[RMDB]
RNA sequence: GGGAACGACUCGAGUAGAGUCGAAAAGAUAACGGUGGCAGAGCAGAAGAUUGAGCGUGAAGCGCUUCUGGCGACGAGCCUGGCGCACCCAAACAUCAUCGCCACGUUCAAGAUCUGCCGCAUGAGCGGCGACGGGUGAAUUCGUUCACCCGUCGCCAAAAGAAACAACAACAACAAC
Reactivity to 2A3 in 0.01 (KOAc 150mM, MgCl2 10mM, bicine 150mM(pH8.5), 24C), signal-to-noise 2, nucleotides 027 to 126: g090a070u170a140a080c110g080g000u000g080g040c040a000g000a010g000c050a020g050a300a040g050a220u020u050g000a010g000c010g010u010g050a110a060g010c020g000c000u100u060c070u220g000g000c010g000a060c100g040a030g000c000c010u030g000g020c000g010c000a020c010c040c000a030a110a080c060a070u210c010a010u130c060g030c120c000a000c010g000u000u030c030a000a000g000a090u000c010u030g000c020c000g000c000a030u100g080a040g120c170
Reactivity to DMS in 0.01 (KOAc 150mM, MgCl2 10mM, bicine 150mM(pH8.5), 24C), signal-to-noise 1, nucleotides 027 to 126: g000a100u000a050a120c080g000g060u010g010g010c000a100g000a120g020c120a040g000a070a070g000a220u030u000g000a040g040c050g020u000g000a120a120g020c050g000c010u000u000c130u000g000g020c000g000a030c250g000a300g000c010c030u000g000g030c000g000c030a150c030c010c010a020a040a110c190a100u000c080a040u010c090g000c080c030a050c090g000u000u000c010a010a040g010a100u000c000u040g000c000c010g050c020a080u000g010a090g000c210